[RMDB]
RNA sequence: GGGAACGACUCGAGUAGAGUCGAAAAAAUCAGGUUGGGGUAGGUGGUUGGUAUCCACAAAGGGAUGAGUGAAAAACUUCGUUAGCAGCUGAACUGAGACACUAGAAGCUAAAAUACACAGCCUCAGUGUUAGCAACUAAAAUGCAGUGAAAGUACACGUAGCCAAUUAAUUCGUUAAUUGGCUACGAAAAGAAACAACAACAACAAC
Reactivity to DMS in 0.01 (KOAc 150mM, MgCl2 10mM, bicine 150mM(pH8.5), 24C), signal-to-noise 1, nucleotides 027 to 156: a050a080u010c030a070g010g000u010u020g030g030g000g070u000a050g000g000u000g000g060u020u020g000g040u000a180u000c010c010a130c050a090a070a030g000g050g010a100u000g010a070g030u000g020a070a040a010a120a030c070u000u000c070g010u000u000a060g040c030a190g000c060u000g010a030a100c030u000g000a090g000a080c040a050c100u000a100g020a070a080g010c090u000a080a060a050a150u000a120c080a140c090a070g010c010c010u000c050a010g010u000g000u000u000a030g050c030a070a020c010u020a000a010a060a060u000g000c050a040g010u000g010a060a070a030g000u010a090c050a140
Reactivity to 2A3 in 0.01 (KOAc 150mM, MgCl2 10mM, bicine 150mM(pH8.5), 24C), signal-to-noise 2, nucleotides 027 to 156: a010a000u130c060a040g030g000u130u080g050g020g040g010u040a120g080g000u010g050g030u020u040g010g050u100a120u050c020c050a020c080a020a110a110g030g040g000a070u100g030a050g040u130g060a050a010a010a080a010c010u050u040c050g110u060u020a030g040c040a000g000c000u000g000a010a000c020u000g030a000g030a030c030a020c070u060a090g030a100a000g080c070u080a190a100a000a000u280a040c150a010c000a050g000c000c000u010c040a000g000u000g060u130u030a000g010c000a000a060c000u140a010a050a060a060u110g010c030a010g000u060g160a150a030a010g070u090a040c060a000

The record gives the reactivity of an RNA of 207 nucleotides to DMS and 2A3. For 2A3, 668 sequencing reads were counted. The DMS profile rests on 2,006 reads.